Record summary
Chemical mapping of a 177-nucleotide RNA with DMS. Values cover nucleotides 27 to 126. Source: RMDB library TTRDES, as collected in RNAgym. The reactions ran in a buffer of 150 mM KOAc, 10 mM MgCl2 and 150 mM bicine (pH 8.5), at 24 C.

RNA sequence: GGGAACGACUCGAGUAGAGUCGAAAAGAUAUGGAGGCUCAGGAAAUGAGUGAUGACCAGGAGUCGGAAACGACUCCUGCAAGCUCACCUGAGGCCUCCUAAGUCAAAACGGAGCUUCGGCUCCGAACCUUCAUAUAGACUUCGGUCUAUAUGAAGGAAAAGAAACAACAACAACAAC
Reactivity to DMS in 0.01 (KOAc 150mM, MgCl2 10mM, bicine 150mM(pH8.5), 24C), signal-to-noise 4, nucleotides 027 to 126: g000a040u000a250u010g000g000a030g000g020c000u000c000a000g000g010a280a140a160u010g000a010g020u000g000a070u000g020a090c300c000a010g000g000a020g020u000c010g000g000a020a060a060c030g000a020c000u010c000c000u000g010c010a010a070g010c000u000c010a090c020c020u000g000a040g010g020c000c000u010c000c000u000a010a060g010u000c010a120a110a150a180c020g000g010a000g020c000u000u020c290g030g000c000u000c000c000g000a020a040